This 177-nucleotide RNA was probed chemically with 2A3 and DMS. Source: RMDB libraries RFM100 and RFMREP, as collected in RNAgym. High DMS reactivity at an A or C suggests that its Watson-Crick edge is free. The reactions ran in a buffer of 150 mM KOAc, 10 mM MgCl2 and 150 mM bicine (pH 8.5), at 24 C.
RNA sequence: GGGAACGACUCGAGUAGAGUCGAAAACAUCUAAGGGCUUGAUAGUCUAUGAUGAAUGACACCAAGAGUUGGCUGAUGGCAACAUGAAAGGACACGUGCAAGACCUGAAAAGGUCACUUGUAGGGCACUUUUUAUACAUCUUCGGAUGUAUAAAAAGAAAAGAAACAACAACAACAAC
Reactivity to 2A3 in 0.01 (KOAc 150mM, MgCl2 10mM, bicine 150mM(pH8.5), 24C), signal-to-noise 6, nucleotides 027 to 126: c010a010u000c000u020a060a110g040g010g000c010u110u180g140a140u280a160g000u000c010u010a020u080g030a010u010g030a070a090u100g040a020c040a040c060c030a050a020g100a010g090u070u120g050g010c030u070g040a070u110g080g010c010a030a010c010a080u160g080a080a040a020g070g020a030c020a010c160g030u040g000c030a040a000g010a080c000c000u030g010a020a030a010a000g000g010u020c010a010c050u020u030g020u040a040g020g040g000c020a020
Reactivity to DMS in 0.01 (KOAc 150mM, MgCl2 10mM, bicine 150mM(pH8.5), 24C), signal-to-noise 9, nucleotides 027 to 126: c020a020u000c010u010a050a160g000g000g010c010u000u020g010a150u030a050g020u000c000u000a300u030g000a020u000g000a090a080u020g010a140c080a180c040c020a090a080g010a100g010u000u000g010g010c030u010g000a090u010g000g010c060a030a040c060a060u010g000a050a060a070g020g000a060c100a040c080g010u000g000c030a030a040g000a040c010c000u000g000a060a040a060a020g000g010u010c040a040c090u000u000g010u000a050g010g010g010c100a100